[RMDB]
RNA sequence: GGGAACGACUCGAGUAGAGUCGAAAAGAUAUGGAGGCAUGGAGUGAUUAACACACGAUGAAACGAGGCGAUCGGAAACGAUCGCCUCGUGGAGUGUGUACAUCACGAUGAAAUGCCUCCUAAGUCACAUAGCAAAGUCGUUCGCGACUUUGCUAUGAAAAGAAACAACAACAACAAC
Reactivity to DMS in 0.01 (KOAc 150mM, MgCl2 10mM, bicine 150mM(pH8.5), 24C), signal-to-noise 1, nucleotides 027 to 126: g020a010u010a300u020g030g010a000g030g010c000a030u010g030g000a140g030u010g020a010u000u010a300a110c000a000c000a000c010g000a130u010g020a190a160a000c020g000a040g020g010c010g000a000u000c000g030g010a200a080a260c040g010a010u010c000g000c010c000u030c000g010u000g000g000a080g010u000g000u000g000u000a050c300a030u000c030a000c000g000a070u010g010a040a190a000u000g010c000c000u000c000c000u000a020a100g000u000c000a300